[RMDB]
Source: RMDB library OK1LIB, as collected in RNAgym.
This 177-nucleotide RNA was probed chemically with 2A3 and DMS.
The RNA was probed in 150 mM KOAc, 10 mM MgCl2 and 150 mM bicine (pH 8.5) at 24 C.
RNA sequence: GGGAACGACUCGAGUAGAGUCGAAAAGCACGUCCGGCAAGACCCGUGCGAACACUUGAGCUCCGGCUUGCCCGCUCUUGUGGAUUAGGACGUUCUAGCUCCGGCUUGGCCGCUAGUUCGUCCGAAACAGUAUCCUCCGAUUCGUCGGAGGAUACUGAAAAGAAACAACAACAACAAC
Reactivity to 2A3 in 0.01 (KOAc 150mM, MgCl2 10mM, bicine 150mM(pH8.5), 24C), signal-to-noise 8, nucleotides 027 to 126: g040c020a000c020g050u050c050c010g030g030c030a030a060g080a180c020c020c010g020u030g000c020g040a110a030c050a030c080u040u130g040a010g010c020u060c090c040g040g000c030u080u100g050c000c000c010g020c010u030c000u020u060g020u040g050g040a080u030u150a070g000g000a000c000g000u000u000c000u000a010g000c050u060c090c040g120g070c170u170u300g130g010c040c030g010c020u000a000g000u010u000c000g000u000c000c000g010a010a000a000
Reactivity to DMS in 0.01 (KOAc 150mM, MgCl2 10mM, bicine 150mM(pH8.5), 24C), signal-to-noise 4, nucleotides 027 to 126: g020c020a020c040g010u000c040c060g000g000c040a080a090g000a140c060c040c030g020u000g010c040g020a120a100c050a050c060u000u010g000a080g030c030u020c120c200g000g000c060u030u020g020c050c020c120g010c030u010c030u030u000g010u000g020g010a150u000u010a110g010g000a000c000g020u000u000c000u010a000g000c050u050c140c050g000g000c120u040u060g010g050c090c080g040c000u000a000g010u000u000c000g000u000c010c000g000a030a050a130